[RMDB]
RNA sequence: GGGAACGACUCGAGUAGAGUCGAAAAUUCGCGUAGGCAAAAAUGGUGAGGUCAGCCGACUUGGCGGAGGAACGCAGCCAACAAAGGUAACUGCGACUGGCGAAGGCACGUAGCCAACAAGCAGUUAGUUGAAUAGUACGUUCGCGUACUAUUCAACAAAAGAAACAACAACAACAAC
Reactivity to 2A3 in 0.01 (KOAc 150mM, MgCl2 10mM, bicine 150mM(pH8.5), 24C), signal-to-noise 2, nucleotides 027 to 126: u030u020c010g000c010g060u080a070g060g000c020a080a040a010a010a090u120g040g010u060g020a040g050g000u060c020a020g010c020c040g060a100c070u060u160g070g000c010g010g020a050g000g020a050a020c030g030c060a010g030c000c010a030a030c060a050a180a000g120g030u040a020a010c010u020g010c020g050a020c060u020g000g000c020g050a100a050g090g020c090a020c140g030u030a010g000c010c000a010a040c060a070a040g000c000a000g000u030u050a030
Reactivity to DMS in 0.01 (KOAc 150mM, MgCl2 10mM, bicine 150mM(pH8.5), 24C), signal-to-noise 3, nucleotides 027 to 126: u000u000c070g010c040g020u010a050g010g000c060a030a060a100a100a080u010g000g010u000g010a100g000g010u000c070a090g020c060c030g050a110c120u000u000g020g010c010g000g010a070g010g000a040a050c080g000c090a180g000c010c030a030a100c190a050a090a080g010g020u000a030a050c030u000g000c020g000a170c190u010g020g000c030g020a150a100g020g000c040a050c110g000u000a260g000c010c020a010a050c090a070a150g000c030a020g000u000u000a080